[RMDB]
RNA sequence: GGGAACGACUCGAGUAGAGUCGAAAACCAACUGGCUGAAGGAGUUGCAGUGUGUCUGCCUAUCUACACUUGCUGUGCAGAAUAACCUCCAACCUGUACAGCAGGCACAGACAGGCAGAUAGACGUCAGCCUGCCCCAAAUCCCUGUUCGCAGGGAACUUUAAAUGAGUGUUCGCACUCAUUUAAAGAAAAGAAACAACAACAACAAC
Reactivity to DMS in 0.01 (KOAc 150mM, MgCl2 10mM, bicine 150mM(pH8.5), 24C), signal-to-noise 3, nucleotides 027 to 156: c050c030a110a140c070u000g030g040c020u020g020a100a150g020g000a170g020u000u000g030c070a180g040u000g020u000g020u000c020u000g000c030c020u000a040u000c000u040a110c110a040c010u000u000g020c040u000g030u000g020c000a050g020a150a140u020a090a190c110c090u010c140c050a080a160c110c010u000g020u000a040c010a060g010c000a030g030g030c040a160c110a040g020a030c010a020g020g000c020a030g000a030u000a040g010a100c020g000u010c040a050g000c000c000u000g060c000c000c010c070a030a070a140u000c000c010c010u000g020u000u010c220g020c030a030g010g120g020a030a020
Reactivity to 2A3 in 0.01 (KOAc 150mM, MgCl2 10mM, bicine 150mM(pH8.5), 24C), signal-to-noise 8, nucleotides 027 to 156: c010c000a010a050c050u030g000g000c000u030g020a060a040g110g150a210g080u150u130g080c110a090g030u080g010u010g010u130c000u000g000c010c000u010a030u010c000u000a020c030a020c080u000u010g000c000u000g000u000g000c000a000g040a140a120u170a190a120c030c060u150c070c020a060a080c020c000u000g000u010a000c000a000g010c000a000g000g000c060a020c010a060g010a010c010a010g000g000c000a000g000a000u000a000g030a000c000g020u010c000a000g000c000c010u030g030c000c010c000c000a040a140a070u060c010c020c000u020g020u040u080c190g000c070a000g000g000g010a000a030